[RMDB]
RNA sequence: GGGAACGACUCGAGUAGAGUCGAAAAAACUGCUUGAUCCUCAAUAGUUGCCAGCUUAUCAAGAACGGUAUCGAAUAGCGCUCCAGCGUCAUUCGUCAACCCUUUCAAUCCGGCUUGCGUGAACCCUAAGCGCUCAAAGAAUUCAGAGCCGCCACCCCAACCAGACAGUGUUCGCACUGUCUGGUUGAAAAGAAACAACAACAACAAC
Reactivity to 2A3 in 0.01 (KOAc 150mM, MgCl2 10mM, bicine 150mM(pH8.5), 24C), signal-to-noise 1, nucleotides 027 to 156: a020a000c070u080g050c020u040u040g020a070u080c000c030u000c080a130a130u070a110g040u090u090g000c010c000a010g000c000u160u110a060u110c030a160a030g020a060a040c100g010g010u020a030u170c030g000a010a050u020a070g010c000g020c040u110c170c080a090g010c000g030u100c040a030u020u010c010g040u030c040a020a190c000c000c000u030u110u050c030a040a040u010c020c020g010g000c000u010u050g000c010g000u050g050a090a120c010c010c000u020a120a010g020c030g020c010u050c050a120a170a010g070a090a080u140u090c040a020g020a050g060c040c010g060c070c020a030c010c000c000